[RMDB]
RNA sequence: GGGAACGACUCGAGUAGAGUCGAAAACGUCAAGGAUUCGUCCUUGACGAAAGACGCGGCUUGAGGGCGUAUACGGCUGCGCACACACACGACCCUCAAGCCAAACAGGUGGAUUCGUCCACCUGAAGAGGAUUUCACAGUUCGCUGUGAAAUCCUCAAAAGAAACAACAACAACAAC
Reactivity to DMS in 0.01 (KOAc 150mM, MgCl2 10mM, bicine 150mM(pH8.5), 24C), signal-to-noise 1, nucleotides 027 to 126: c000g040u010c000a000a000g000g000a040u000u020c220g020u000c000c000u000u000g000a000c020g000a020a070a170g020a180c230g020c070g000g040c000u000u000g000a000g000g020g000c050g050u000a040u020a100c220g000g000c000u010g000c140g000c050a080c080a080c200a150c080a030c010g000a070c000c000c020u020c000a000a000g000c000c050a000a060a060c000a010g020g000u010g000g000a020u000u040c220g050u000c020c000a000c000c000u000g000a020a070
Reactivity to 2A3 in 0.01 (KOAc 150mM, MgCl2 10mM, bicine 150mM(pH8.5), 24C), signal-to-noise 2, nucleotides 027 to 126: c000g000u000c000a000a000g000g000a040u030u080c160g090u000c030c010u010u010g000a000c000g000a020a010a000g110a010c070g030c110g160g000c000u010u010g000a010g000g010g000c000g000u040a060u040a010c080g050g000c100u230g070c110g040c020a040c000a000c000a000c000a020c110g300a300c010c020c000u010c010a000a000g000c000c000a000a010a030c000a010g000g010u000g000g030a050u040u060c160g070u000c030c010a000c000c000u000g000a030a010